[RMDB]
RNA sequence: GGGAACGACUCGAGUAGAGUCGAAAACGUCGUGAACUAGCGACAAUGCUCUAGGUCCAUCGUUAUCUAACCGAAACAUCGUGACUAGUCGUAGAAUAGAACCAGGAGAGGGCGCUGGCAAACAAAGACUUGGUGUCUGAUUCGUCGGACGCCGGGUAAAAGAAACAACAACAACAAC
Reactivity to DMS in 0.01 (KOAc 150mM, MgCl2 10mM, bicine 150mM(pH8.5), 24C), signal-to-noise 9, nucleotides 027 to 126: c120g000u010c050g010u010g000a120a120c100u010a100g010c020g010a040c060a090a070u040g000c030u010c020u010a070g010g010u010c030c050a080u010c080g010u010u010a080u010c050u010a080a090c090c050g000a070a080a090c100a070u010c060g000u010g010a080c030u010a040g010u010c050g010u020a060g010a070a070u020a070g010a070a080c050c040a110g000g000a080g000a080g010g000g000c030g010c020u000g000g000c060a060a070a070c110a080a080a080g010
Reactivity to 2A3 in 0.01 (KOAc 150mM, MgCl2 10mM, bicine 150mM(pH8.5), 24C), signal-to-noise 9, nucleotides 027 to 126: c040g010u010c010g010u030g070a100a050c050u020a050g010c000g030a020c020a030a080u160g020c010u010c010u050a050g060g030u020c020c020a070u060c090g040u040u060a110u050c030u040a030a060c020c010g030a040a020a010c030a040u070c030g040u050g040a020c020u020a020g030u030c040g030u040a020g030a080a030u070a040g040a040a020c010c010a010g010g040a070g010a020g010g020g010c010g000c010u010g010g000c020a030a050a020c040a020a110a010g080